[RMDB]
RNA sequence: GGGAACGACUCGAGUAGAGUCGAAAAGGGAGAACCGAGCAGAGGCAUAGCGAACUGCGCACGGUGAAGCCUUGAGGGAAAGCCGUAGGACCCGGGUUCGAUUCCCGGCAGCUCCACCGAAGGGCCAGACCUCCAUAAUCUUCGGAUUAUGGAGGUCAAAAGAAACAACAACAACAAC
Reactivity to DMS in 0.01 (KOAc 150mM, MgCl2 10mM, bicine 150mM(pH8.5), 24C), signal-to-noise 3, nucleotides 027 to 126: g000g000g020a090g000a220a050c020c000g020a120g030c000a030g010a130g050g020c020a160u010a110g030c090g010a090a060c010u000g020c030g050c170a090c020g000g000u020g000a090a220g050c010c000u040u020g000a300g000g000g000a110a110a060g000c020c010g040u000a130g000g010a080c150c010c000g010g000g020u010u040c180g000a300u030u030c000c010c000g000g000c100a100g000c020u020c070c010a270c000c000g000a190a090g000g000g000c030c170a110
Reactivity to 2A3 in 0.01 (KOAc 150mM, MgCl2 10mM, bicine 150mM(pH8.5), 24C), signal-to-noise 3, nucleotides 027 to 126: g030g020g010a140g010a060a030c020c020g000a000g000c010a010g010a090g120g000c070a160u140a120g090c070g050a070a060c010u020g000c030g000c050a040c080g000g010u060g040a050a030g010c010c020u010u010g040a050g030g020g010a010a090a000g030c010c050g100u130a120g060g100a080c050c020c010g010g010g000u040u050c060g010a060u050u090c000c000c000g000g000c000a030g000c010u010c010c030a030c000c000g020a030a020g000g020g020c000c000a010
Overview: The record gives the reactivity of an RNA of 177 nucleotides to DMS and 2A3. DMS adducts were read by reverse transcription with MarathonRT. As a SHAPE reagent, 2A3 marks flexible, mostly unpaired nucleotides at the ribose 2'-OH. Reactivities are given for positions 27 through 126. In probing experiments dimethyl sulfate is read out at A N1 and C N3, which are open when not base-paired. The RNA was probed in 150 mM KOAc, 10 mM MgCl2 and 150 mM bicine (pH 8.5) at 24 C.